[RMDB]
Background: This 177-nucleotide RNA was probed chemically with 2A3 and DMS. For DMS the reverse transcriptase was MarathonRT. DMS (dimethyl sulfate) methylates the pairing face of unpaired adenines and cytosines. High 2A3 reactivity points to a flexible backbone, as in loops and unpaired stretches. For 2A3 the reverse transcriptase was SuperScript II with manganese. The data come from the RNA Mapping Database (RMDB), libraries RFM100 and RFMREP. The reactions ran in a buffer of 150 mM KOAc, 10 mM MgCl2 and 150 mM bicine (pH 8.5), at 24 C.
RNA sequence: GGGAACGACUCGAGUAGAGUCGAAAAGACGCUGACGGUACAGGCCAGACUAUUAUUGUCUGGUAUAGUGCAACAGCAGAACAAUUUGCUGAGGGCUAUUGAGGCGCAACAGCAUCUGUUGCAACUCUCCAGUACCUGUCUUCGGACAGGUACUGGAAAAAGAAACAACAACAACAAC
Reactivity to 2A3 in 0.01 (KOAc 150mM, MgCl2 10mM, bicine 150mM(pH8.5), 24C), signal-to-noise 2, nucleotides 027 to 126: g030a010c060g010c030u060g020a050c070g120g080u060a000c000a040g140g000c000c010a000g000a010c010u020a060u300u030a120u210u190g000u000c000u000g000g020u020a010u030a000g000u000g000c000a050a030c000a020g030c020a000g000a030a040c070a080a130u060u050u140g020c040u020g020a080g030g030g000c040u010a040u100u130g050a030g000g070c020g010c020a040a040c000a020g070c030a070u010c040u080g000u020u050g020c010a020a080c000u000c030
Reactivity to DMS in 0.01 (KOAc 150mM, MgCl2 10mM, bicine 150mM(pH8.5), 24C), signal-to-noise 2, nucleotides 027 to 126: g000a150c180g000c010u010g000a150c100g010g080u000a000c020a220g000g000c000c000a010g000a020c000u000a070u050u020a130u050u040g000u000c000u000g010g020u010a010u020a060g000u010g000c030a060a160c060a020g030c020a110g000a100a100c120a110a090u070u000u000g050c040u020g000a160g010g000g030c020u030a240u040u040g030a110g010g000c290g000c020a030a040c000a010g000c080a080u020c070u010g010u010u000g000c000a020a070c060u000c050